[RMDB]
An RNA of 177 nucleotides, treated with DMS and read out base by base. For DMS the reverse transcriptase was MarathonRT. Values are in units of 0.01, from 0 to 300, in steps of 10. The reactions ran in a buffer of 150 mM KOAc, 10 mM MgCl2 and 150 mM bicine (pH 8.5), at 24 C. The data come from the RNA Mapping Database (RMDB), library TTRINS.
RNA sequence: GGGAACGACUCGAGUAGAGUCGAAAAGAUAUGGAUAGUCGUGCCCUCCUGAUGACCUACUCCCCACCUUGUGUAUCGGAAACGAUACGCAAGAGGUAGCAAGGGAGGGCACGACUAUCCUAAGUCAUCUGAGUACUGGGUUCGCCCAGUACUCAGAAAAAGAAACAACAACAACAAC
Reactivity to DMS in 0.01 (KOAc 150mM, MgCl2 10mM, bicine 150mM(pH8.5), 24C), signal-to-noise 2, nucleotides 027 to 126: g030a090u000a300u010g000g010a020u010a000g030u000c000g020u000g010c020c000c000u000c010c000u010g000a220u030g020a030c300c010u000a070c150u020c020c030c020c060a300c250c010u000u050g010u010g000u000a000u000c010g050g000a120a080a090c010g030a000u010a000c010g000c000a010a010g000a070g000g010u000a020g000c140a080a230g020g010g010a020g040g010g000c000a020c000g010a000c000u000a000u000c000c000u000a040a050g000u010c050a120